The record gives the reactivity of an RNA of 177 nucleotides to 2A3 and DMS. The RNA was probed in 150 mM KOAc, 10 mM MgCl2 and 150 mM bicine (pH 8.5) at 24 C. The data come from the RNA Mapping Database (RMDB), library RFM100. The 2A3 profile rests on 2,249 reads. The DMS profile rests on 2,747 reads.

RNA sequence: GGGAACGACUCGAGUAGAGUCGAAAAUCUGGAAACGCCUGCUUCUUUUUUACCUGAGAGCAUUUUUUCGCAUUCUGAUUUCGUUAGUUUAGAUUUUGAAUAUCUUGUCCAGUUAGUAGGAGUGCCAUCAGUUUGAAAAGUUCGCUUUUCAAACUGAAAAAGAAACAACAACAACAAC
Reactivity to 2A3 in 0.01 (KOAc 150mM, MgCl2 10mM, bicine 150mM(pH8.5), 24C), signal-to-noise 5, nucleotides 027 to 126: u020c010u010g030g040a110a080a010c040g080c040c030u040g020c040u100u140c020u070u150u080u060u120u100a080c030c050u080g020a020g010a010g070c020a050u000u030u000u030u080u140c030g010c020a010u030u010c010u040g100a110u060u100u080c060g050u050u100a090g010u080u060u100a020g020a090u030u020u010u180g050a060a050u110a040u110c020u020u060g020u020c030c010a030g020u090u070a010g010u080a040g010g030a020g000u040g000c010c000a030
Reactivity to DMS in 0.01 (KOAc 150mM, MgCl2 10mM, bicine 150mM(pH8.5), 24C), signal-to-noise 2, nucleotides 027 to 126: u010c040u000g000g030a060a110a080c090g000c130c050u000g010c030u010u000c000u070u000u060u010u030u040a070c090c110u030g010a110g000a070g010c060a000u000u020u010u010u000u020c050g000c050a050u010u000c010u000g010a090u000u000u010c080g010u030u000a050g010u020u010u020a010g000a060u010u000u040u010g000a060a060u040a060u000c040u000u000g000u000c030c030a030g010u000u010a050g000u030a100g000g000a070g050u000g000c050c080a110